Source information:
Structure probing data (2A3 and DMS) for a 177-nucleotide construct. Reactivities are given for positions 27 through 126.

[RMDB]
RNA sequence: GGGAACGACUCGAGUAGAGUCGAAAACUGGCUUUGUGGUCUGAGCCUUUCUUCAGGUGCUACAUUUCUGUUCAAAUGAUUUCAAAAGAUAAGAUGGCAAUAUGAUCAUUUAUCAUUUUUACAUUGCGCAUCAACGUAUGUUCGCAUACGUUGAUGCAAAAGAAACAACAACAACAAC
Reactivity to 2A3 in 0.01 (KOAc 150mM, MgCl2 10mM, bicine 150mM(pH8.5), 24C), signal-to-noise 2, nucleotides 027 to 126: c020u040g010g040c060u190u090u150g030u050g060g020u000c040u060g050a030g030c040c000u010u140u070c030u090u000c040a000g150g080u060g080c030u030a050c000a050u050u030u110c050u100g220u120u050c020a020a090a080u100g040a190u060u060u110c080a090a020a000a020g080a010u070a030a050g060a080u020g000g000c020a010a060u130a070u300g050a030u000c000a000u040u080u040a120u000c040a050u080u010u090u070u030a110c110a160u090u110g090c040
Reactivity to DMS in 0.01 (KOAc 150mM, MgCl2 10mM, bicine 150mM(pH8.5), 24C), signal-to-noise 2, nucleotides 027 to 126: c070u000g030g020c100u000u000u010g040u000g020g000u010c010u030g060a100g000c040c010u010u020u020c080u000u010c130a070g000g010u010g000c050u010a030c070a090u000u020u000c090u020g000u010u000c130a040a010a040u000g020a110u000u000u000c100a040a030a090a070g020a090u020a050a050g000a050u000g000g010c030a060a180u020a140u000g000a060u000c050a060u000u000u000a050u020c050a040u000u000u000u020u000a120c120a100u000u000g030c280
The DMS profile rests on 1,356 reads.
Source: RMDB library OK2TRN, as collected in RNAgym.